Chemical mapping of a 177-nucleotide RNA with 2A3 and DMS. Reactivities are given for positions 27 through 126. For DMS the reverse transcriptase was MarathonRT. The data come from the RNA Mapping Database (RMDB), library OK2TST.
RNA sequence: GGGAACGACUCGAGUAGAGUCGAAAAUACUGCAACUAAAGUGUGCAGAAACAUUGAGUGCGUCCUUGUGGACAAACACCAAUCUUUAAGGAUUUUCUUUCUGAGCAUAACUAAACUAACUGACCGCAUUAAGCAUUACAUUCGUGUAAUGCUUAAUAAAAGAAACAACAACAACAAC
Reactivity to 2A3 in 0.01 (KOAc 150mM, MgCl2 10mM, bicine 150mM(pH8.5), 24C), signal-to-noise 9, nucleotides 027 to 126: u100a030c010u010g010c000a030a010c040u260a170a080a140g190u200g010u010g090c000a010g030a050a060a000c040a030u050u130g050a070g100u030g000c020g020u010c000c000u130u160g160u270g090g000a010c000a020a080a000c020a010c010c010a020a030u020c040u050u170u100a100a060g090g000a080u100u050u040u060c030u030u050u010c020u040g040a020g020c020a050u050a140a040c020u080a140a050a040c020u060a040a030c030u040g070a060c020c030g010c030
Reactivity to DMS in 0.01 (KOAc 150mM, MgCl2 10mM, bicine 150mM(pH8.5), 24C), signal-to-noise 9, nucleotides 027 to 126: u010a150c020u000g000c020a020a030c040u010a100a210a160g020u010g010u000g000c000a010g010a150a090a090c190a050u000u000g000a100g020u000g010c190g010u000c000c010u000u010g030u020g020g010a030c020a040a130a150c040a030c030c030a030a050u000c080u000u010u010a090a080g010g000a080u000u000u010u000c040u000u000u000c030u000g000a100g010c040a040u010a040a060c080u010a040a050a060c090u000a050a120c110u000g000a130c050c040g020c170
Notes:
The 2A3 profile rests on 15,795 reads.